RNA sequence: GGGAACGACUCGAGUAGAGUCGAAAAGCUCAGAAAAGAAGGCAUGUUGAAAGGGAAUCCAUUUAGGAAGGGAAGAGAAAAAUCCAUCCAUCCAUAAAGAUUGGGAAAGUCUGCAGACAGUUAUCCUCACAUCUCCCCUUGCCCCGUCUUAUCCCUAUCACUAAUUAAUCUUCGGAUUAAUUAGUGAAAAAGAAACAACAACAACAAC
Reactivity to 2A3 in 0.01 (KOAc 150mM, MgCl2 10mM, bicine 150mM(pH8.5), 24C), signal-to-noise 3, nucleotides 027 to 156: g060c030u040c040a020g120a040a160a010a010g040a020a020g020g010c070a030u070g030u030u070g130a190a110a100g020g000g020a080a040u040c100c030a110u170u140u170a070g010g000a000a010g010g010g020a050a040g030a020g070a020a070a090a030a020u040c010c020a010u010c010c020a000u000c010c010a030u140a170a060a020g050a050u130u160g000g000g050a020a160a050g040u060c050u100g100c050a030g040a110c000a000g030u090u100a050u170c020c020u040c000a070c000a110u040c030u020c050c000c010c010u000u050g050c000c010c000c000g000u020c050u070u100a050u080c000c000c000u030a030
Reactivity to DMS in 0.01 (KOAc 150mM, MgCl2 10mM, bicine 150mM(pH8.5), 24C), signal-to-noise 3, nucleotides 027 to 156: g000c030u010c030a130g000a110a070a070a120g020a080a040g010g010c040a080u010g020u020u000g000a070a100a080g000g030g020a180a110u000c040c030a190u000u020u000a110g010g020a070a070g020g030g020a080a130g010a140g000a010a090a090a070a080u000c040c020a130u000c030c010a100u000c010c040a080u000a100a070a080g020a100u000u000g010g000g010a060a040a110g020u000c020u010g030c090a080g030a090c040a080g010u000u010a140u000c040c000u000c050a080c070a050u010c040u000c030c000c010c010u000u000g010c030c010c010c020g020u010c020u000u000a090u010c000c010c010u010a260
Source: RMDB library OK3TST, as collected in RNAgym. Chemical mapping of a 207-nucleotide RNA with 2A3 and DMS. DMS adducts were read by reverse transcription with MarathonRT. Values cover nucleotides 27 to 156.